Chemical mapping of a 177-nucleotide RNA with 2A3 and DMS. Values cover nucleotides 27 to 126. 2A3 adducts were read by reverse transcription with SuperScript II with manganese. Source: RMDB library OK2TRN, as collected in RNAgym. For DMS the reverse transcriptase was MarathonRT.
[RMDB]
RNA sequence: GGGAACGACUCGAGUAGAGUCGAAAAAGGAUUUCAAAUUUUUGACCAGAAAUUAUACAAAACGAUCAGGCUGGCAAAUUGACUGAUUUUCAAACCUUAUAUGGAAAGGUAAAAUGUGCUUGUGGGAACUCGUAAGGAUAUUCGUAUCCUUACGAGUAAAAGAAACAACAACAACAAC
Reactivity to 2A3 in 0.01 (KOAc 150mM, MgCl2 10mM, bicine 150mM(pH8.5), 24C), signal-to-noise 2, nucleotides 027 to 126: a000g000g050a000u010u030u070c040a030a130a120u020u090u010u050u060g140a190c000c000a000g040a010a120a020u120u060a120u050a140c080a030a230a090a020c060g010a010u090c020a000g130g000c000u010g000g040c010a040a000a020u020u020g020a040c100u050g060a020u030u000u070u120c070a050a070a080c000c000u070u050a150u030a040u300g060g110a090a050a010g030g000u060a050a010a020a070u150g020u030g010c090u080u110g040u050g150g060g000a010
Reactivity to DMS in 0.01 (KOAc 150mM, MgCl2 10mM, bicine 150mM(pH8.5), 24C), signal-to-noise 3, nucleotides 027 to 126: a090g010g010a030u000u000u000c030a010a080a220u000u000u000u000u010g010a160c020c000a070g010a100a040a030u000u000a110u010a170c130a080a080a080a120c170g010a040u000c110a110g000g000c010u000g010g000c020a030a020a040u000u000g000a260c270u000g000a030u000u000u000u000c040a030a070a070c020c010u000u010a100u020a110u010g010g010a040a050a030g010g010u000a060a020a080a080u010g010u000g000c090u000u000g010u000g000g000g000a120